[RMDB]
RNA sequence: GGGAACGACUCGAGUAGAGUCGAAAACACCCGCAAUUCGUUGCGGGUGAGAGCACCACUCCUGCGGGAGUUUAGGCCAUACGGACAGCCGGGUGCAAAGCCAUAGCAGGUCCUUCGGGACCUGCAACAAUAGGAUCUACUUCGGUAGAUCCUAUUGAAAAGAAACAACAACAACAAC
Reactivity to DMS in 0.01 (KOAc 150mM, MgCl2 10mM, bicine 150mM(pH8.5), 24C), signal-to-noise 7, nucleotides 027 to 126: c010a010c010c000c000g020c010a010a020u000u010c150g010u000u000g010c000g010g000g020u000g000a030g000a090g010c000a020c010c010a060c000u000c000c000u010g040c160g030g000g000a010g010u000u000u000a030g010g010c000c010a090u000a070c190g000g000a040c070a150g010c000c010g000g010g000u000g010c010a080a030a150g010c010c010a040u010a100g010c000a010g010g000u000c000c000u000u010c160g040g000g000a010c000c000u000g000c000a010a040
Reactivity to 2A3 in 0.01 (KOAc 150mM, MgCl2 10mM, bicine 150mM(pH8.5), 24C), signal-to-noise 1, nucleotides 027 to 126: c000a000c000c010c000g000c000a010a050u100u090c190g070u070u010g000c000g000g000g000u000g000a000g010a000g000c000a000c000c000a010c010u010c000c010u050g020c280g090g010g000a000g000u050u080u120a040g000g000c010c000a040u050a090c070g030g010a010c010a010g000c010c010g020g000g010u010g000c000a010a030a000g010c010c000a050u120a030g000c010a000g010g000u010c020c010u050u080c230g050g000g000a010c000c000u000g000c000a000a000
The record gives the reactivity of an RNA of 177 nucleotides to DMS and 2A3. DMS adducts were read by reverse transcription with MarathonRT. For 2A3, 17,721 sequencing reads were counted. Conditions: 150 mM KOAc, 10 mM MgCl2 and 150 mM bicine (pH 8.5), 24 C. Source: RMDB library M2PK50, as collected in RNAgym.